Overview:
This 177-nucleotide RNA was probed chemically with 2A3 and DMS. For DMS the reverse transcriptase was MarathonRT. It was measured as part of the RMDB library OK2TST. For DMS, 837 sequencing reads were counted. 2A3 adducts were read by reverse transcription with SuperScript II with manganese.
RNA sequence: GGGAACGACUCGAGUAGAGUCGAAAAAACAUUAAUGGCGCAAGGAGCAGACAUAAUAGCCAUCCAGGAAACUUGGAAGUCGUCGGAGCAGAUCGCCAGCAUGCAUACUGGAGAUUAUGUGCUCCAAGGUAUCGCAAAAUUUCGAUUUUGCGAUACCAAAAGAAACAACAACAACAAC
Reactivity to 2A3 in 0.01 (KOAc 150mM, MgCl2 10mM, bicine 150mM(pH8.5), 24C), signal-to-noise 2, nucleotides 027 to 126: a000a000c100a080u170u160a110a000u160g090g070c040g020c100a140a000g060g030a030g030c010a010g080a050c020a030u260a180a020u030a130g000c050c010a050u040c030c000a020g010g120a110a030a000c010u050u090g040g000a040a010g040u060c030g010u010c100g020g020a030g000c000a020g000a040u010c030g030c020c000a000g000c040a020u250g000c000a040u050a260c010u000g000g000a010g010a000u030u080a090u230g120u030g000c000u010c000c000a000a020
Reactivity to DMS in 0.01 (KOAc 150mM, MgCl2 10mM, bicine 150mM(pH8.5), 24C), signal-to-noise 1, nucleotides 027 to 126: a060a010c160a070u010u040a030a100u000g050g020c010g010c130a110a130g000g020a030g000c030a070g000a050c100a070u000a070a070u040a180g010c050c020a060u000c040c060a060g010g000a090a070a070c050u010u020g030g030a140a000g010u000c080g060u030c170g000g000a020g020c000a050g000a020u010c030g010c000c010a000g030c070a050u020g020c300a070u000a090c020u000g010g000a040g010a010u000u000a100u000g010u010g010c010u000c010c000a000a040